[RMDB]
RNA sequence: GGGAACGACUCGAGUAGAGUCGAAAACAGAUGGUCAACGGCACCUUCGCCGACCUCCGCGAGCAGCGCCUCGUCAUCGAACUGGCCGAGGCGCCGCGCCAGGCGCUGCACGACCUCUGCCUGGGCAGGUAUCACUGCCCUUCGGGGCAGUGAUACCAAAAGAAACAACAACAACAAC
Reactivity to 2A3 in 0.01 (KOAc 150mM, MgCl2 10mM, bicine 150mM(pH8.5), 24C), signal-to-noise 1, nucleotides 027 to 126: c030a010g110a100u200g000g000u010c010a060a060c050g030g000c010a030c030c000u090u110c050g030c010c000g040a110c000c080u160c080c000g030c010g040a010g010c040a000g000c000g040c000c000u020c040g070u000c000a030u160c030g120a110a110c160u040g000g010c120c070g010a030g000g080c010g010c000c000g020c010g000c000c040a010g000g000c000g000c020u020g020c060a050c180g000a040c030c040u010c010u030g030c020c000u020g000g010g100c050a060
Reactivity to DMS in 0.01 (KOAc 150mM, MgCl2 10mM, bicine 150mM(pH8.5), 24C), signal-to-noise 1, nucleotides 027 to 126: c010a010g010a040u000g040g000u030c010a230a160c020g010g030c020a090c060c030u010u000c020g020c060c030g000a290c040c070u000c010c080g010c010g000a090g010c050a040g000c020g020c000c000u000c030g030u010c020a010u000c180g010a100a190c230u020g020g000c090c010g030a020g000g030c000g010c000c030g010c010g000c200c180a030g010g030c020g000c000u000g060c060a110c160g000a020c010c010u010c000u000g010c040c000u020g020g040g020c100a100
Chemical mapping of a 177-nucleotide RNA with 2A3 and DMS. The DMS profile rests on 796 reads. The reactions ran in a buffer of 150 mM KOAc, 10 mM MgCl2 and 150 mM bicine (pH 8.5), at 24 C. For 2A3, 1,041 sequencing reads were counted.